[RMDB]
RNA sequence: GGGAACGACUCGAGUAGAGUCGAAAAAGCCUAGGUAGGAUAAAACCCCCUACCGGGUCACUCUUAAGGCGUUUCCUGCACGGGAUAGCCACUAGUGACUAGGUGUAAGUGAUCUGAUCUGGACGUAUCGUGUUGCGCAAGUACAGCACCCAUAGGAACAUUCUAUAUGAUUCGUCAUAUAGAAUGUAAAAGAAACAACAACAACAAC
Reactivity to DMS in 0.01 (KOAc 150mM, MgCl2 10mM, bicine 150mM(pH8.5), 24C), signal-to-noise 3, nucleotides 027 to 156: a120g020c010c000u000a050g060g020u010a040g000g010a290u010a060a080a160a170c030c030c070c030c010u000a030c010c010g050g060g000u010c020a020c000u020c060u000u000a060a080g020g010c010g020u000u000u000c010c000u000g020c130a090c160g020g010g020a070u000a080g050c010c010a060c060u000a070g020u000g010a040c020u000a030g010g010u000g000u000a040a080g000u000g000a060u000c020u000g000a050u000c010u000g000g000a050c000g000u010a060u010c060g030u000g010u000u010g010c000g020c060a110a080g000u000a050c040a080g010c040a110c010c000c030a120u010a140g020g000a120
Reactivity to 2A3 in 0.01 (KOAc 150mM, MgCl2 10mM, bicine 150mM(pH8.5), 24C), signal-to-noise 3, nucleotides 027 to 156: a000g020c010c020u030a030g000g020u010a020g020g010a060u130a230a300a050a060c020c000c000c000c010u000a000c000c010g010g030g010u030c000a000c000u040c000u080u210a180a060g050g000c020g030u080u160u100c020c020u060g110c150a110c200g010g000g010a050u100a070g010c010c000a030c030u010a010g020u000g030a020c030u040a030g020g040u040g020u080a070a120g040u030g090a090u010c050u030g020a050u030c010u040g000g050a050c010g030u070a030u110c060g010u050g060u080u050g010c030g020c030a070a020g020u050a090c010a030g000c010a030c030c020c000a050u070a060g100g000a020